[RMDB]
RNA sequence: GGGAACGACUCGAGUAGAGUCGAAAACAAAAGGAACCAAAAAUUGAAAUGAUAGAAGAUAUUGCAAAAAUAGUAAAUAGUGUUGAGAGCACUGCAUACACAGAAUGCUCCACUGUAUGCGAGUUCCACCGCGUAUCAUCUUCGGAUGAUACGCGGUAAAAGAAACAACAACAACAAC
Reactivity to 2A3 in 0.01 (KOAc 150mM, MgCl2 10mM, bicine 150mM(pH8.5), 24C), signal-to-noise 1, nucleotides 027 to 126: c030a000a000a090a020g180g000a080a000c080c110a210a020a000a000a000u300u300g110a190a000a140u110g060a000u060a140g140a050a050g060a190u080a030u050u050g000c000a000a000a300a000a160u200a120g070u110a050a050a050u000a080g000u000g060u020u200g070a080g110a000g100c000a070c000u030g010c080a100u210a080c000a000c050a000g050a070a000u110g000c100u000c000c000a000c000u030g040u020a110u140g020c000g080a000g000u000u000c050c000
The data come from the RNA Mapping Database (RMDB), library OK1LIB. The record gives the reactivity of an RNA of 177 nucleotides to 2A3. The 2A3 profile rests on 408 reads. The reactions ran in a buffer of 150 mM KOAc, 10 mM MgCl2 and 150 mM bicine (pH 8.5), at 24 C.